[RMDB]
RNA sequence: GGGAACGACUCGAGUAGAGUCGAAAAGCAGGUCACGUUGCUAUUGGUUAUCUAUACCAGUCUGCUUGGUUGCCCGGAGCUAUAAAAAAGUCUCCUUCAACGAAGCAUUCAUCUCCAGUGAUUGCUCCUAAUCAAAUAUGUUCGCAUAUUUGAUUAGAAAAGAAACAACAACAACAAC
Reactivity to 2A3 in 0.01 (KOAc 150mM, MgCl2 10mM, bicine 150mM(pH8.5), 24C), signal-to-noise 5, nucleotides 027 to 126: g000c020a020g010g090u020c010a000c040g050u050u060g050c070u100a150u080u080g010g000u090u060a130u190c130u110a120u110a130c000c010a010g010u020c010u000g000c000u020u010g110g000u020u020g050c070c060c000g000g000a010g000c020u050a030u300a170a170a050a030a010a030g050u040c010u000c000c000u040u040c020a030a020c030g100a020a000g010c000a010u010u020c020a070u000c030u030c020c030a060g010u000g020a040u030u070g000c030u020c000
Reactivity to DMS in 0.01 (KOAc 150mM, MgCl2 10mM, bicine 150mM(pH8.5), 24C), signal-to-noise 6, nucleotides 027 to 126: g010c020a040g010g010u000c030a060c050g000u010u000g010c140u000a090u010u000g010g010u000u000a120u020c180u010a110u010a040c010c010a050g010u000c030u000g000c000u000u000g000g020u000u000g010c170c150c200g010g010a010g010c010u000a070u020a010a080a090a130a070a040g000u010c010u000c000c010u010u000c030a020a030c040g000a050a020g010c000a020u000u000c030a150u000c040u010c040c070a110g010u000g000a080u000u000g000c050u000c090
The data come from the RNA Mapping Database (RMDB), library RFMREP. The record gives the reactivity of an RNA of 177 nucleotides to 2A3 and DMS. DMS adducts were read by reverse transcription with MarathonRT. For 2A3, 8,352 sequencing reads were counted. The reactions ran in a buffer of 150 mM KOAc, 10 mM MgCl2 and 150 mM bicine (pH 8.5), at 24 C.